Overview:
The record gives the reactivity of an RNA of 207 nucleotides to 2A3 and DMS. Source: RMDB library M2RFPK, as collected in RNAgym. 2A3 adducts were read by reverse transcription with SuperScript II with manganese. 2A3 is a SHAPE reagent: it acylates the 2'-hydroxyl of flexible nucleotides of all four kinds.
[RMDB]
RNA sequence: GGGAACGACUCGAGUAGAGUCGAAAAGAUAGGGUAACCACCGGCGCGCGUCACUGAUAUAUCCACCGGGGGGUAAGGGGAGAAAAGGAUACAGCGCGACGAAGUUAGCACGCUGCCCCGUAAGGCUUGAAGAGUGUAGUGUUCGCACUACACUCAACAUCACUACUAUGUUCGCAUAGUAGUGAUGAAAAGAAACAACAACAACAAC
Reactivity to 2A3 in 0.01 (KOAc 150mM, MgCl2 10mM, bicine 150mM(pH8.5), 24C), signal-to-noise 2, nucleotides 027 to 156: g060a050u140a040g010g010g060u060a060a070c030c030a030c080c020g000g020c010g000c020g000c000g050u060c050a020c140u050g080a020u060a020u010a030u200c000c020a060c100c120g000g000g000g000g000g020u050a080a050g000g010g040g010a070g060a010a090a010a020g030g000a020u050a120c040a010g010c000g010c000g000a020c020g000a050a010g040u060u070a020g040c050a010c090g050c030u070g010c020c030c000c000g010u030a050a040g040g010c040u080u100g100a130a070g010a050g000u000g000u000a000g000u000g040u070u040c120g020c040a000c000u000a000c000a000c000u000c000a000a000
Reactivity to DMS in 0.01 (KOAc 150mM, MgCl2 10mM, bicine 150mM(pH8.5), 24C), signal-to-noise 2, nucleotides 027 to 156: g000a160u000a040g020g020g000u000a070a130c040c000a110c080c020g000g020c000g020c060g020c060g030u000c060a190c060u000g010a150u020a130u000a100u000c010c080a150c050c030g020g020g060g000g030g010u020a040a070g010g030g000g010a100g010a040a040a090a040g010g010a180u010a050c000a040g040c030g020c020g020a080c010g020a090a090g000u000u010a070g010c060a080c020g020c020u010g010c020c010c010c020g000u010a080a110g000g010c040u000u000g010a080a160g020a030g000u000g020u000a010g040u000g020u000u000c300g000c000a030c000u000a010c000a000c000u000c000a020a090